[RMDB]
The record gives the reactivity of an RNA of 177 nucleotides to 2A3 and DMS. Conditions: 150 mM KOAc, 10 mM MgCl2 and 150 mM bicine (pH 8.5), 24 C. For DMS, 720 sequencing reads were counted.
RNA sequence: GGGAACGACUCGAGUAGAGUCGAAAAGGAAAUGGUGCUUUGAUGGACCUCGAACCAACACGAUUCUUGAAGACAACAAUGAAGUUGAAGUCAUCACGAAGUUGGGUGAGAGAAAGAUCCUAAGACCCGGCGUACAGCAGUUCGCUGCUGUACGCCGAAAAGAAACAACAACAACAAC
Reactivity to 2A3 in 0.01 (KOAc 150mM, MgCl2 10mM, bicine 150mM(pH8.5), 24C), signal-to-noise 2, nucleotides 027 to 126: g080g000a060a080a120u070g000g000u190g010c020u110u110u170g110a180u080g000g000a050c050c010u000c000g000a000a010c000c000a000a000c000a050c050g160a150u000u000c000u090u000g000a060a060g000a000c000a000a000c050a120a020u300g080a300a000g120u000u000g050a100a000g080u000c000a000u000c000a050c090g000a000a010g000u090u060g120g010g290u020g030a050g000a000g110a080a040a000g160a270u000c000c020u010a070a000g010a000c000c070
Reactivity to DMS in 0.01 (KOAc 150mM, MgCl2 10mM, bicine 150mM(pH8.5), 24C), signal-to-noise 1, nucleotides 027 to 126: g000g070a000a040a040u000g020g120u000g000c000u000u010u000g000a030u010g010g100a220c040c030u000c000g000a190a220c110c000a000a000c000a030c290g020a300u000u000c080u000u000g000a000a170g000a000c000a070a280c000a000a030u000g060a110a120g000u000u010g010a000a220g000u000c000a030u000c000a000c000g000a040a110g000u030u000g000g010g050u030g000a150g000a030g000a130a000a090g000a060u000c000c040u000a080a300g000a280c000c010